[RMDB]
The record gives the reactivity of an RNA of 177 nucleotides to 2A3 and DMS. DMS adducts were read by reverse transcription with MarathonRT. The reactions ran in a buffer of 150 mM KOAc, 10 mM MgCl2 and 150 mM bicine (pH 8.5), at 24 C. It was measured as part of the RMDB library TTRINS.

RNA sequence: GGGAACGACUCGAGUAGAGUCGAAAAGAUAUGGACCCUACGAGUGCCAUGUUAACUCCGAUGAAAGCUAUCGGAAACGAUAGCUGGAGGAGUUAACAUGGAACUACACUUGUAGGGUCCUAAGUCAGAACAUAUCAUUGUUCGCAAUGAUAUGUUCAAAAGAAACAACAACAACAAC
Reactivity to 2A3 in 0.01 (KOAc 150mM, MgCl2 10mM, bicine 150mM(pH8.5), 24C), signal-to-noise 2, nucleotides 027 to 126: g020a000u090a050u140g000g020a010c000c000c000u010a000c020g010a000g000u020g030c010c000a000u000g000u000u000a010a000c000u000c000c010g270a300u040g000a040a030a010g010c000u010a000u010c000g050g080a130a030a000c010g000a010u000a010g000c010u000g000g000a000g000g000a000g000u000u000a000a010c010a000u000g000g010a010a000c000u060a010c000a000c010u010u000g010u000a000g010g000g000u000c000c000u000a000a000g000u000c000a010
Reactivity to DMS in 0.01 (KOAc 150mM, MgCl2 10mM, bicine 150mM(pH8.5), 24C), signal-to-noise 6, nucleotides 027 to 126: g010a080u000a300u000g000g010a020c010c000c000u000a000c010g010a010g010u000g000c000c000a000u000g000u000u000a010a010c000u000c000c000g000a150u020g000a240a150a030g000c000u000a010u000c000g000g000a150a070a170c000g000a010u000a010g010c010u000g000g000a040g000g020a020g000u000u000a000a000c010a000u000g000g010a000a010c080u020a300c010a010c010u000u000g010u000a010g010g010g000u000c000c000u000a010a070g000u010c080a180